[RMDB]
RNA sequence: GGGAACGACUCGAGUAGAGUCGAAAACAUGCCCGAAUGGUCACUUCGCUAUUUUGAGGAAUAGAUGCAAGUGACAUUCACUCUUGCUGACUCGGCGGGCACAAGUUUGUCAGCUCACAAACAUUAUAAAGUGAGGUUUUACAUUCGAUGAAACUAAGAUAUACUCAUGAUUCGUCAUGAGUAUAUCAAAAGAAACAACAACAACAAC
Reactivity to 2A3 in 0.01 (KOAc 150mM, MgCl2 10mM, bicine 150mM(pH8.5), 24C), signal-to-noise 9, nucleotides 027 to 156: c030a030u090g010c000c010c010g010a010a020u080g150g100u030c000a000c010u010u000c000g000c010u020a030u010u030u040u090g200a240g050g100a020a020u050a030g290a300u060g040c150a020a000g000u000g000a000c000a000u010u010c000a020c020u120c020u090u170g000c020u020g040a140c030u040c130g030g000c000g000g040g000c020a020c030a060a080g020u020u060u060g020u030c020a010g020c020u030c010a030c000a020a190a020c040a090u240u270a120u270a210a080a010g020u020g020a020g040g020u040u040u030u070a050c050a050u030u130c070g150a150u120g080a060a030a030c050u080a050a090
Reactivity to DMS in 0.01 (KOAc 150mM, MgCl2 10mM, bicine 150mM(pH8.5), 24C), signal-to-noise 5, nucleotides 027 to 156: c040a090u000g000c020c010c010g010a040a050u000g020g010u000c000a010c000u000u000c010g030c010u000a020u010u000u000u020g030a290g030g000a030a020u010a020g010a100u010g010c110a030a020g040u000g000a040c000a030u010u000c020a160c110u000c040u000u000g020c000u000g020a150c040u000c070g040g030c010g020g140g000c030a040c050a060a110g020u010u000u000g020u000c040a130g030c030u000c070a070c040a120a090a110c110a150u010u000a180u010a070a080a150g000u010g000a070g010g020u000u000u000u000a090c040a190u000u000c100g010a150u000g000a100a030a110c200u000a080a300